Source information: This 177-nucleotide RNA was probed chemically with DMS and 2A3. For 2A3, 3,217 sequencing reads were counted.
[RMDB]
RNA sequence: GGGAACGACUCGAGUAGAGUCGAAAAACCAUCCUAUUCGUAGGAUGGUGCACCAUUGCCGAUUGUAUAUUAUACCGCAGGCGGAAAAGCGGUUCAAAUAAGGAACUUGUCAGUUCGCUGACAAGAAACAUUGAGCAAUGUUCGCAUUGCUCAAUGUAAAAGAAACAACAACAACAAC
Reactivity to DMS in 0.01 (KOAc 150mM, MgCl2 10mM, bicine 150mM(pH8.5), 24C), signal-to-noise 4, nucleotides 027 to 126: a030c000c000a020u000c000c000u000a020u010u010c160g030u000a000g000g010a000u000g010g010u000g010c160a220c030c010a120u000u010g010c020c030g020a090u000u010g010u010a110u000a090u000u010a110u000a050c010c030g020c010a110g010g020c060g010g000a040a050a080a110g010c010g010g000u010u000c180a030a070a100u000a090a110g010g000a100a170c010u000u000g000u000c000a010g010u000u020c180g020c010u000g000a010c000a010a000g000a060a080
Reactivity to 2A3 in 0.01 (KOAc 150mM, MgCl2 10mM, bicine 150mM(pH8.5), 24C), signal-to-noise 2, nucleotides 027 to 126: a000c010c000a000u000c000c000u020a020u050u090c200g070u070a010g000g010a000u000g010g010u010g010c020a050c020c000a050u020u200g040c020c010g100a100u090u090g140u080a120u020a040u290u130a070u090a050c000c010g000c030a020g040g070c000g000g070a060a130a030a000g010c020g000g000u030u040c070a110a060a000u110a110a090g080g010a040a100c000u000u000g000u000c000a000g000u000u070c200g000c070u010g030a010c020a000a000g020a010a040